[RMDB]
RNA sequence: GGGAACGACUCGAGUAGAGUCGAAAAUGAAAUUUGAGGUCAUGAGAAAUUUCAAAUUGAUGUAACAGCUGUCAGGGUAAAUUAAAAAUUGUCUUUGGAAGAUUGGCAGUAGGUUGACUAGAGACAGUGAAGAAAGGUACUUCGGUACCUUUCUUCAAAAAGAAACAACAACAACAAC
Reactivity to DMS in 0.01 (KOAc 150mM, MgCl2 10mM, bicine 150mM(pH8.5), 24C), signal-to-noise 2, nucleotides 027 to 126: u000g000a080a070a080u010u010u000g000a080g020g020u000c070a060u020g000a210g010a110a080a020u010u000u000c000a000a010a060u010u000g000a130u000g000u000a100a080c060a090g010c030u000g020u020c020a030g000g000g000u000a040a070a120u000u030a040a080a040a120a100u000u000g010u000c030u000u000u000g000g020a060a160g000a050u000u000g000g010c030a030g000u010a050g010g010u010u000g000a220c000u010a080g000a040g020a020c050a060g040
The record gives the reactivity of an RNA of 177 nucleotides to DMS. For DMS, 1,426 sequencing reads were counted.